The data come from the RNA Mapping Database (RMDB), library RNAMAK. Chemical mapping of a 207-nucleotide RNA with 2A3.
[RMDB]
RNA sequence: GGGAACGACUCGAGUAGAGUCGAAAAGCGUACUACGUGGGUAGUCUCGGGAUGGGAACUACUGUGUCCCAAAUAGGACACAGCCCAUUCUCUAGCGUGGACUAUAAUCCACGUAUCGCAAAACUUGUGCACUAUGCUUCGGCAUAGUGCACAAGAACAACGUCGUAGGAUUCGUCCUACGACGUUGAAAAGAAACAACAACAACAAC
Reactivity to 2A3 in 0.01 (KOAc 150mM, MgCl2 10mM, bicine 150mM(pH8.5), 24C), signal-to-noise 3, nucleotides 027 to 156: g000c000g030u120a110c030u000a000c040g000u000g000g040g010u010a010g010u000c010u020c030g020g000g020a000u000g020g020g000a000a060c050u140a060c000u300g000u000g000u000c040c020c020a220a220a080u300a080g000g000a000c000a000c000a000g020c010c000c000a020u070u020c020u000c050u080a030g090c070g200u280g020g030a010c000u000a010u100a180a190u010c010c020a000c010g010u000a000u110c000g000c040a030a020a010a090c000u000u000g000u000g020c030a000c000u000a000u000g000c000u030u100c220g030g000c000a000u000a000g000u000g010c010a000c000a000a000g000a000a000